The record gives the reactivity of an RNA of 177 nucleotides to 2A3 and DMS. It was measured as part of the RMDB library OK2TST. In probing experiments dimethyl sulfate is read out at A N1 and C N3, which are open when not base-paired. Conditions: 150 mM KOAc, 10 mM MgCl2 and 150 mM bicine (pH 8.5), 24 C.
[RMDB]
RNA sequence: GGGAACGACUCGAGUAGAGUCGAAAAGGCGUAUUAAAAAACUUGUAUCCAUAGAACAUCUGCCGUAAGAUAGAUAAUGAAUAAAUAGGAGUUAAUAUCAUUCCAAUUGCUGUUACAAAAGUAAUUAAUAAAUAGCGUAUUUCGAUACGCUAUUUAUAAAAGAAACAACAACAACAAC
Reactivity to 2A3 in 0.01 (KOAc 150mM, MgCl2 10mM, bicine 150mM(pH8.5), 24C), signal-to-noise 1, nucleotides 027 to 126: g090g000c060g050u050a080u060u230a140a140a000a030a010a000c060u030u070g060u000a100u060c010c010a030u020a070g070a010a020c000a050u020c030u040g030c030c050g050u120a060a020g000a070u030a000g040a010u080a100a070u120g020a070a010u080a180a120a060u220a040g000g060a020g030u000u020a070a010u090a070u170c030a040u000u060c030c000a020a040u100u040g000c050u090g020u090u040a060c020a040a270a060a000g030u050a020a070u140u030a020
Reactivity to DMS in 0.01 (KOAc 150mM, MgCl2 10mM, bicine 150mM(pH8.5), 24C), signal-to-noise 4, nucleotides 027 to 126: g000g000c170g010u000a040u000u010a000a070a100a080a090a130c030u020u010g010u000a030u000c010c010a040u000a090g010a130a120c180a020u010c020u000g020c100c120g000u000a090a060g010a050u010a060g010a170u010a040a040u000g010a040a010u000a030a030a070u010a050g010g010a150g000u000u000a010a030u000a030u000c030a100u000u000c010c020a070a070u000u000g000c030u010g000u000u010a160c140a070a060a090a070g000u010a030a030u020u000a050
For 2A3, 981 sequencing reads were counted. The DMS profile rests on 3,023 reads.